[RMDB]
RNA sequence: GGGAACGACUCGAGUAGAGUCGAAAAAAUUUUUUGGGUCUCGUCAGACAAAUCAGUGACAUGAUGGUCAUAGCGAAAGCACACGCACGAAAUGUCACUGAUGAAAAAGUGCGUGUGACCAAUUUAACCAAAGUCCAUUAUUCGUAAUGGACUUUGGAAAAGAAACAACAACAACAAC
Reactivity to 2A3 in 0.01 (KOAc 150mM, MgCl2 10mM, bicine 150mM(pH8.5), 24C), signal-to-noise 1, nucleotides 027 to 126: a010a000u230u080u060u010u030u070g160g010g020u040c030u000c020g120u120c070a070g010a040c050a000a090a080u030c000a000g030u010g010a000c020a060u210g010a080u080g190g000u050c010a080u230a080g000c040g070a040a090a050g050c010a010c000a000c030g030c020a020c020g050a120a050a000u010g020u030c020a010c020u050g010a020u050g000a030a040a020a000a000g050u030g000c000g000u020g050u030g000a010c010c000a030a040u090u160u070a060a050
Reactivity to DMS in 0.01 (KOAc 150mM, MgCl2 10mM, bicine 150mM(pH8.5), 24C), signal-to-noise 2, nucleotides 027 to 126: a070a020u000u000u000u010u000u000g000g030g000u000c020u000c110g010u000c140a080g020a030c060a090a090a050u010c000a020g000u000g000a010c000a060u000g020a150u010g010g010u000c000a090u010a130g000c030g000a110a050a120g030c020a120c080a000c010g000c000a020c020g000a040a080a020u000g010u000c000a000c020u000g000a010u000g000a030a040a050a080a060g010u010g010c000g030u010g010u000g000a030c020c040a040a120u020u010u000a060a200